[RMDB]
RNA sequence: GGGAACGACUCGAGUAGAGUCGAAAAGCUGUGUCGACCCUGACGACAACAACACCCAACAUAGGUGAUCAGCCACGAUUUGUUGUGGCCAAUUGGCACGGCGCUUCCGUGCGUGCAGGCAUCUUUGAAGAUCAGAAUGGCAUCUUUUGGGAGUUUGCUACAGCUUCAUAUUCGUAUGAAGCUGUAGAAAAGAAACAACAACAACAAC
Reactivity to 2A3 in 0.01 (KOAc 150mM, MgCl2 10mM, bicine 150mM(pH8.5), 24C), signal-to-noise 3, nucleotides 027 to 156: g020c020u020g010u010g010u090c020g020a120c010c030c030u030g060a040c030g030a030c030a090a010c020a030a000c010a100c020c020c010a060a050c070a150u220a060g040g010u040g020a110u080c050a030g030c000c000a020c020g080a080u060u060u240g140u080u080g010u040g030g000c000c000a050a120u100u130g040g000c010a000c000g000g040c040g050c110u210u070c020c020g020u040g050c000g010u030g020c040a020g060g000c010a050u000c060u050u090u120g080a080a020g020a030u040c030a010g150a220a100u080g040g000c020a000u040c000u030u070u030u010g030g020g010a030g020u040u170u070g010
Reactivity to DMS in 0.01 (KOAc 150mM, MgCl2 10mM, bicine 150mM(pH8.5), 24C), signal-to-noise 1, nucleotides 027 to 156: g020c030u000g030u010g000u020c010g000a110c050c010c020u030g000a100c010g000a050c040a080a080c070a070a130c020a070c020c000c030a130a190c110a180u000a040g030g000u000g000a130u000c060a090g000c000c010a080c060g040a210u010u010u010g030u010u000g010u000g000g060c000c050a030a080u000u000g010g000c000a010c000g000g010c150g000c160u000u010c020c010g000u000g000c000g000u020g010c010a050g010g050c010a090u000c050u000u000u010g000a020a060g030a060u000c050a140g010a100a120u000g030g000c060a090u000c030u000u000u010u010g010g010g020a140g050u010u000u000g010

Structure probing data (2A3 and DMS) for a 207-nucleotide construct.
The 2A3 profile rests on 2,060 reads.
Values cover nucleotides 27 to 156.
For DMS, 3,330 sequencing reads were counted.
DMS adducts were read by reverse transcription with MarathonRT.